[RMDB]
RNA sequence: GGGAACGACUCGAGUAGAGUCGAAAAUUCCAUUGCGGUUAUCGAUGAAUGUUCGUGCUCGCGUGAGAAGAUUGCAGGCGUGCUGUCAGGAUUCACGGCCGAGGAAAUCAAGGACAGCGUGGAAGAAGACUAGCGAUUUAUUCGUAAAUCGCUAGUCAAAAGAAACAACAACAACAAC
Reactivity to 2A3 in 0.01 (KOAc 150mM, MgCl2 10mM, bicine 150mM(pH8.5), 24C), signal-to-noise 4, nucleotides 027 to 126: u020u000c020c010a030u050u300g000c010g030g080u090u070a100u200c050g050a050u090g090a160a130u200g030u200u050c050g040u080g060c020u040c080g060c030g020u040g020a040g010a110a040g040a050u010u130g000c010a020g070g110c140g150u100g010c020u010g030u040c010a040g070g020a090u040u050c020a010c010g040g000c020c010g020a040g010g070a040a140a020u040c020a040a020g100g000a020c000a010g000c030g010u020g040g010a040a040g010a110a010
Reactivity to DMS in 0.01 (KOAc 150mM, MgCl2 10mM, bicine 150mM(pH8.5), 24C), signal-to-noise 3, nucleotides 027 to 126: u000u000c010c000a060u000u010g060c030g010g020u000u000a080u000c100g010a090u000g000a130a130u000g000u010u000c040g030u010g000c040u000c070g000c030g020u010g010a050g000a180a150g000a060u000u010g010c000a050g010g010c190g010u010g010c020u000g000u010c020a080g000g010a210u010u000c040a050c040g000g000c050c040g000a090g000g010a070a050a050u000c050a070a120g000g000a030c030a010g010c020g010u010g000g000a040a050g010a120a130
Structure probing data (2A3 and DMS) for a 177-nucleotide construct.
2A3 adducts were read by reverse transcription with SuperScript II with manganese.
For DMS the reverse transcriptase was MarathonRT.
The reactions ran in a buffer of 150 mM KOAc, 10 mM MgCl2 and 150 mM bicine (pH 8.5), at 24 C.